The record gives the reactivity of an RNA of 177 nucleotides to DMS and 2A3. The reactions ran in a buffer of 150 mM KOAc, 10 mM MgCl2 and 150 mM bicine (pH 8.5), at 24 C. As a SHAPE reagent, 2A3 marks flexible, mostly unpaired nucleotides at the ribose 2'-OH.
RNA sequence: GGGAACGACUCGAGUAGAGUCGAAAAGGGCCGAACCGCACGUGCAUGAGGCCCGGUACGGUCGAUGUGUCGUCGGCGUUGUAGUAGUACUCGACGCCCUGGACCAGCGAGGACGCGCAGUUGCCGAGACAGGCUGUAAAUUCGUUUACAGCCUGUCAAAAGAAACAACAACAACAAC
Reactivity to DMS in 0.01 (KOAc 150mM, MgCl2 10mM, bicine 150mM(pH8.5), 24C), signal-to-noise 5, nucleotides 027 to 126: g000g010g030c000c030g000a090a120c150c070g000c050a130c300g040u060g000c020a050u000g000a300g000g010c000c010c010g010g010u020a060c050g020g030u000c030g000a050u000g020u010g000u010c040g030u000c300g010g020c040g010u000u000g000u030a020g010u010a150g010u050a300c010u000c010g010a010c030g000c000c000c070u010g000g000a040c040c020a040g000c010g000a110g000g000a020c010g000c040g010c090a080g000u020u020g000c000c010g010a250
Reactivity to 2A3 in 0.01 (KOAc 150mM, MgCl2 10mM, bicine 150mM(pH8.5), 24C), signal-to-noise 5, nucleotides 027 to 126: g020g000g020c000c000g030a050a020c050c000g080c040a090c110g160u280g090c030a070u080g080a050g000g030c000c020c000g000g000u030a010c000g000g040u040c040g040a080u050g080u050g050u140c070g050u020c040g010g010c020g000u020u060g040u060a070g000u010a010g020u030a070c020u020c010g010a000c010g020c000c000c000u070g050g040a100c020c010a010g020c000g050a040g060g000a010c010g000c010g000c030a050g020u120u130g000c010c010g020a030